[RMDB]
RNA sequence: GGGAACGACUCGAGUAGAGUCGAAAAAGGAACAAACUCCAGAUGCGCCACCUUAAGAGCUGUAGCACUCACCGCGAGGGUCCACGGCCUCAUUCUUGAAGUCAGUGAGACCAAGAACCCACCAAUUCCGGACACACUAGGAUUAUAGGCACGAGGAUCGUCACGGAUUAUUCGUAAUCCGUGACGAAAAAGAAACAACAACAACAAC
Reactivity to 2A3 in 0.01 (KOAc 150mM, MgCl2 10mM, bicine 150mM(pH8.5), 24C), signal-to-noise 1, nucleotides 027 to 156: a010g090g020a100a030c030a000a110a020c170u040c050c010a010g050a150u120g030c040g060c020c020a060c000c000u100u090a120a040g020a000g050c040u010g060u100a000g040c050a000c070u010c000a050c070c000g100c130g050a120g070g000g000u000c050c020a040c090g000g000c040c000u070c000a140u260u130c070u080u260g010a080a060g000u000c200a060g000u060g010a110g030a060c000c030a000a000g010a050a020c080c000c060a050c010c000a110a000u060u010c040c000g170g000a050c000a000c030a030c090u010a020g030g000a010u020u150a040u120a030g050g000c040a000c080g030a060g060g040a040

Conditions: 150 mM KOAc, 10 mM MgCl2 and 150 mM bicine (pH 8.5), 24 C. The record gives the reactivity of an RNA of 207 nucleotides to 2A3. 2A3 adducts were read by reverse transcription with SuperScript II with manganese.